[RMDB]
An RNA of 177 nucleotides, treated with DMS and 2A3 and read out base by base.
RNA sequence: GGGAACGACUCGAGUAGAGUCGAAAAGAUAUGGACGUUAAGCUUGAUGACCUAUACCGAGUUCGGAAACGAAUAGUGUAUAGCAAGAGCCAUACGUCCUAAGUCAAAAGUGAGGUUCGCCUCACAAUCCAAAGGAGGAGUUCGCUCCUCCUUUGGAAAAAGAAACAACAACAACAAC
Reactivity to DMS in 0.01 (KOAc 150mM, MgCl2 10mM, bicine 150mM(pH8.5), 24C), signal-to-noise 2, nucleotides 027 to 126: g000a000u000a120u010g000g000a020c000g010u000u000a210a190g000c010u020u000g000a060u010g000a030c300c000u000a010u000a010c010c010g000a190g020u030u000c020g020g000a050a010a040c010g000a030a060u000a080g000u000g020u000a000u000a000g030c000a010a020g000a010g000c000c020a140u000a030c000g000u000c010c000u000a010a150g000u000c010a090a120a150a070g030u010g000a010g000g030u010u000c270g010c000c000u020c000a010c010a040a070
Reactivity to 2A3 in 0.01 (KOAc 150mM, MgCl2 10mM, bicine 150mM(pH8.5), 24C), signal-to-noise 2, nucleotides 027 to 126: g020a010u000a020u040g000g010a000c010g010u050u000a130a120g050c010u060u050g000a160u070g020a300c030c000u000a010u010a020c000c030g080a130g300u000u020c000g010g000a000a020a020c000g010a010a020u070a100g300u280g020u160a000u000a010g070c030a240a210g010a000g000c010c010a070u070a110c020g010u020c010c010u000a010a010g020u020c000a110a000a150a090g000u010g010a020g030g030u080u120c180g160c030c010u000c000a010c020a000a060

For 2A3, 2,042 sequencing reads were counted. DMS adducts were read by reverse transcription with MarathonRT.